[RMDB]
RNA sequence: GGGAACGACUCGAGUAGAGUCGAAAAACGCGCCGUAGCCGGCCGCCUCGAAGCUCCCUUCCUAACGGGCGGCGGGCUGAAUCCUUUGCAGACGACUUAAAACGCGACGGGGCAUUGUAAGUGGCAGACAGAAUGAGGAAUUCGUUCCUCAUUCUGUAAAAGAAACAACAACAACAAC
Reactivity to DMS in 0.01 (KOAc 150mM, MgCl2 10mM, bicine 150mM(pH8.5), 24C), signal-to-noise 5, nucleotides 027 to 126: a090c050g010c060g030c010c040g000u030a040g020c010c010g010g030c010c000g020c010c000u020c100g000a230a100g010c070u010c030c020c020u010u020c070c040u030a100a160c260g010g000g020c020g000g010c010g010g000g020c030u000g000a080a110u010c030c010u000u010u010g010c010a030g010a050c040g000a050c050u000u020a070a040a080a080c080g010c020g010a070c050g010g000g000g030c060a080u030u010g010u000a060a110g000u010g000g000c090a120g000
Reactivity to 2A3 in 0.01 (KOAc 150mM, MgCl2 10mM, bicine 150mM(pH8.5), 24C), signal-to-noise 5, nucleotides 027 to 126: a010c050g030c010g000c010c000g040u050a000g000c010c050g190g000c010c000g000c000c000u110c080g020a040a010g010c030u060c020c000c000u070u070c040c020u090a090a030c050g000g000g000c000g000g010c010g000g000g000c000u000g000a020a050u040c010c020u030u040u070g020c010a020g020a090c040g020a040c060u120u210a050a020a080a030c050g030c030g040a020c040g010g000g000g000c020a030u010u110g030u050a150a080g050u050g050g020c020a010g000
Notes: This 177-nucleotide RNA was probed chemically with DMS and 2A3. The RNA was probed in 150 mM KOAc, 10 mM MgCl2 and 150 mM bicine (pH 8.5) at 24 C. The 2A3 profile rests on 4,617 reads.